RNA sequence: GGGAACGACUCGAGUAGAGUCGAAAAGCUUUAAAAUUAUCCUUGGAACAGAGAAUAAGAAGAUAGUCAAAAUGCUUCGAGGAAAGUUGAAGAAGCUAGGUGCCAUCUCUACAAACGUUGAAAUUGGGAAAAGGGACUGUCUAGACCUUCUUAGCACCGUACUCGAGUUAUUCGUAACUCGAGUACGAAAAGAAACAACAACAACAAC
Reactivity to 2A3 in 0.01 (KOAc 150mM, MgCl2 10mM, bicine 150mM(pH8.5), 24C), signal-to-noise 1, nucleotides 027 to 156: g000c000u050u150u180a100a030a030a030u140u040a130u110c000c000u020u080g110g000a110a010c010a060g070a060g040a300a150u210a240a000g040a070a000g060a130u130a070g090u010c030a170a120a000a090u070g010c000u030u030c000g000a000g010g000a070a050a160g030u050u100g030a160a120g040a000a000g000c030u010a070g090g000u010g030c040c000a010u040c000u000c000u070a030c070a080a080a030c070g000u030u040g010a130a140a110u060u060g030g060g000a010a080a020a060g000g000g000a010c000u130g010u140c070u070a000g030a060c000c000u090u000c070u030u000a000g000c070a060c010